[RMDB]
RNA sequence: GGGAACGACUCGAGUAGAGUCGAAAACGGGGACGUUGGUCACCAAGAAGCCAAACAUUCCCGCAGCUCAGCGCGAUGUGAAGUUCACAGACGUGCCUGGCCGUUUGAGUGGUUCAUUAACCGAGAAACGGGGUUGGAAGGAUAUUACUUGGUCACACUCCUAAAUUAUAUUCGUAUAAUUUAGGAGAAAAGAAACAACAACAACAAC
Reactivity to DMS in 0.01 (KOAc 150mM, MgCl2 10mM, bicine 150mM(pH8.5), 24C), signal-to-noise 2, nucleotides 027 to 156: c070g020g000g010g000a050c050g030u000u000g000g000u000c030a110c030c090a050a070g030a170a250g000c010c000a050a100a150c050a100u000u000c000c010c000g020c010a120g040c030u010c080a090g000c000g040c030g000a160u000g040u000g020a100a230g020u000u000c000a090c030a060g010a120c000g000u010g000c000c070u010g020g040c030c030g020u000u000u000g000a110g030u000g010g010u000u000c110a150u000u000a090a070c000c010g000a130g000a020a050a030c020g030g010g000g030u000u000g000g010a110a100g010g000a130u000a030u010u000a090c020u010u000g010g020u000c100a100c110a150
Reactivity to 2A3 in 0.01 (KOAc 150mM, MgCl2 10mM, bicine 150mM(pH8.5), 24C), signal-to-noise 6, nucleotides 027 to 156: c040g000g000g020g000a010c040g020u030u020g060g020u080c020a020c060c010a020a020g060a040a010g060c030c020a070a150a050c020a070u120u130c010c010c030g020c070a020g000c020u080c120a010g000c000g000c010g050a020u020g040u010g050a230a080g120u270u190c000a020c010a020g190a250c030g020u010g030c020c030u030g020g030c000c020g020u010u060u070g080a130g020u140g020g000u030u040c050a070u170u290a040a040c040c040g030a030g090a110a070a010c030g020g020g000g000u030u040g030g050a110a070g040g010a010u040a090u190u090a130c020u020u030g030g000u030c010a010c010a000